Chemical mapping of a 207-nucleotide RNA with DMS and 2A3. For 2A3, 4,178 sequencing reads were counted. Reactivities are given for positions 27 through 156. The reactions ran in a buffer of 150 mM KOAc, 10 mM MgCl2 and 150 mM bicine (pH 8.5), at 24 C.

RNA sequence: GGGAACGACUCGAGUAGAGUCGAAAAGUAAAGAUCGCUCUUUUACUCGGCAUGAUACCACCGUGAUCGGGUCAACAGAGUAGUUGCAAAUGACAACAAUGCUCAGGGUUAUGCUCUCGCUGCCUAAAAAAUCGUUUAACGUUCGCGUUAAACGAAAGAGGCACAAAUAGUUCGCUAUUUGUGCCUCAAAAGAAACAACAACAACAAC
Reactivity to DMS in 0.01 (KOAc 150mM, MgCl2 10mM, bicine 150mM(pH8.5), 24C), signal-to-noise 1, nucleotides 027 to 156: g000u000a050a050a090g000a130u010c050g010c090u000c000u000u000u000u030a070c020u010c000g010g000c010a090u010g000a160u010a110c050c030a140c000c050g000u010g000a050u000c050g040g000g060u000c070a090a100c150a110g010a060g000u000a050g050u000u000g030c070a070a120a270u000g020a090c040a030a020c010a060a090u020g000c010u000c050a080g040g010g050u000u010a070u000g010c000u000c020u000c050g050c050u010g030c040c090u020a010a060a100a030a060a070u010c010g070u000u000u000a010a000c000g050u000u000c300g070c100g030u000u000a000a000a020c000g000a020a020a100
Reactivity to 2A3 in 0.01 (KOAc 150mM, MgCl2 10mM, bicine 150mM(pH8.5), 24C), signal-to-noise 6, nucleotides 027 to 156: g050u080a040a090a000g060a120u120c080g000c040u020c020u030u050u020u020a010c010u010c000g000g000c010a010u050g020a020u060a100c020c050a030c030c030g040u060g030a270u080c020g000g000g010u000c010a010a010c060a040g020a000g010u080a010g010u020u030g030c030a070a220a250u170g050a090c010a030a000c010a090a100u080g000c000u020c060a020g060g030g010u080u150a080u170g020c010u010c010u020c070g010c040u060g010c020c020u150a080a090a020a010a010a040u010c000g010u000u000u000a000a000c000g010u040u050c200g000c000g110u000u010a010a000a000c000g000a000a010a000